Record summary:
This 207-nucleotide RNA was probed chemically with DMS and 2A3. For DMS, 3,970 sequencing reads were counted. The data come from the RNA Mapping Database (RMDB), library M2RFPK. Conditions: 150 mM KOAc, 10 mM MgCl2 and 150 mM bicine (pH 8.5), 24 C. For 2A3, 2,856 sequencing reads were counted.
[RMDB]
RNA sequence: GGGAACGACUCGAGUAGAGUCGAAAAACCAAGUCUGGGGGCCGAUGAGGGUUGGCUCAAAGUAGGGUUUUGACUUGAAAACUCAAGCUGUGACCCCCAAACGAUGGAGGUAAAUGAGAAUCCUCCUAAAACUAUGGACACUUCGGUGUCCAUAGAACAUUACUUGUCACUUCGGUGACAAGUAAUGAAAAGAAACAACAACAACAAC
Reactivity to DMS in 0.01 (KOAc 150mM, MgCl2 10mM, bicine 150mM(pH8.5), 24C), signal-to-noise 2, nucleotides 027 to 156: a120c020c010a130a180g010u000c020u010g000g020g000g040g030c030c000g010a140u000g000a120g010g000g020u000u000g000g020c050u000c030a040a030a090g040u000a110g010g000g020u000u000u000u000g010a110c120u000u000g000a060a050a050a110c060u000c010a030a130g030c010u000g020u000g030a140c000c000c010c010c000a020a030a020c030g020a140u010g030g000a050g010g010u000a030a110a130u020g010a180g000a230a160u000c000c000u000c000c000u000a020a080a080a170c010u000a000u010g000g010a040c000a000c000u000u010c300g090g020u010g010u000c000c010a000u000a000g000a030a170
Reactivity to 2A3 in 0.01 (KOAc 150mM, MgCl2 10mM, bicine 150mM(pH8.5), 24C), signal-to-noise 3, nucleotides 027 to 156: a010c010c000a030a000g040u050c040u020g000g000g000g000g000c000c030g070a020u070g020a050g010g100g030u090u070g070g000c030u010c030a060a060a020g070u090a060g030g050g050u010u010u050u110g070a090c020u050u120g060a010a080a000a000c010u010c020a040a020g030c040u080g050u190g170a220c010c000c000c000c000a020a000a000c050g020a070u130g010g000a020g000g010u050a090a190a150u230g040a070g060a070a050u050c000c000u000c010c000u000a030a050a000a000c000u000a000u000g000g000a010c010a000c000u050u080c230g090g000u000g000u010c000c000a000u000a000g000a000a000